Chemical mapping of a 177-nucleotide RNA with 2A3 and DMS. Conditions: 150 mM KOAc, 10 mM MgCl2 and 150 mM bicine (pH 8.5), 24 C. For 2A3, 861 sequencing reads were counted.
RNA sequence: GGGAACGACUCGAGUAGAGUCGAAAAUCACUACGUCGCGAGACAGUAGGGUUGCUUCUCUGUGGGAGUGUUCAAUGUCUGAAGGGAAGGAGCCUUUAGUACGAGAGGAACGGGGGUUCGUGACCUCUCGGGACAUGUCGUUCGCGACAUGUCCCGAAAAAGAAACAACAACAACAAC
Reactivity to 2A3 in 0.01 (KOAc 150mM, MgCl2 10mM, bicine 150mM(pH8.5), 24C), signal-to-noise 2, nucleotides 027 to 126: u080c000a030c140u090a030c050g000u000c010g010c000g000a000g050a040c030a090g040u010a020g010g000g010u020u020g070c030u020u000c010u000c010u050g140u170g030g000g020a100g030u050g100u080u170c070a200a060u110g060u090c070u130g060a050a010g000g000g000a000a040g000g050a000g020c000c030u020u050u150a080g010u090a000c090g000a040g000a000g030g000a000a000c000g000g000g000g080g100u110u160c030g020u010g170a300c010c000u030c000
Reactivity to DMS in 0.01 (KOAc 150mM, MgCl2 10mM, bicine 150mM(pH8.5), 24C), signal-to-noise 3, nucleotides 027 to 126: u080c120a210c060u000a070c030g000u000c000g000c110g000a100g010a020c000a070g010u030a020g010g000g010u000u000g000c040u000u010c000u010c020u010g010u100g000g000g000a060g030u050g000u060u020c260a120a120u050g010u000c000u000g000a190a060g000g000g000a110a040g000g000a040g000c010c000u000u000u010a100g020u040a090c050g000a130g000a050g000g040a300a040c070g000g010g010g000g020u100u030c020g000u000g000a170c010c000u000c020